[RMDB]
RNA sequence: GGGAACGACUCGAGUAGAGUCGAAAAGAUAUGGAGCCAUGAUAGCAACAGCGUGGGAUCGGAAACGAUCCGCACGACAUGCUAGAGUGGCUCCUAAGUCAAAGUCAAGAUCUUCGGAUCUUGACAACACCUAGGUAGCGUUCGCGCUACCUAGGUGAAAAGAAACAACAACAACAAC
Reactivity to 2A3 in 0.01 (KOAc 150mM, MgCl2 10mM, bicine 150mM(pH8.5), 24C), signal-to-noise 2, nucleotides 027 to 126: g030a000u010a030u080g010g020a000g000c000c000a020u030g040a060u040a000g010c130a050a120c200a230g050c030g020u030g000g000g000a000u000c000g000g000a050a030a010c000g000a020u010c010c000g000c000a000c020g040a040c070a100u300g010c000u050a010g010a010g020u020g000g010c000u000c000c000u000a000a000g000u000c010a000a120a030g000u010c000a000a000g020a020u000c030u080u180c300g090g000a010u010c000u000u010g000a010c000a000a020
Reactivity to DMS in 0.01 (KOAc 150mM, MgCl2 10mM, bicine 150mM(pH8.5), 24C), signal-to-noise 2, nucleotides 027 to 126: g010a050u040a300u020g000g000a010g040c010c000a010u000g000a300u000a020g020c010a010a150c300a080g000c010g010u030g020g010g000a010u000c000g020g000a080a080a090c000g040a010u000c000c000g060c000a010c020g000a040c080a260u000g000c000u000a010g000a300g000u010g000g010c020u000c000c000u010a000a050g020u000c000a120a040a220g000u000c000a000a000g000a000u000c000u000u030c300g010g010a030u000c000u000u000g000a000c000a060a060
Source information:
This 177-nucleotide RNA was probed chemically with 2A3 and DMS. For DMS the reverse transcriptase was MarathonRT. The data come from the RNA Mapping Database (RMDB), library TTRDES. For DMS, 1,605 sequencing reads were counted. Conditions: 150 mM KOAc, 10 mM MgCl2 and 150 mM bicine (pH 8.5), 24 C.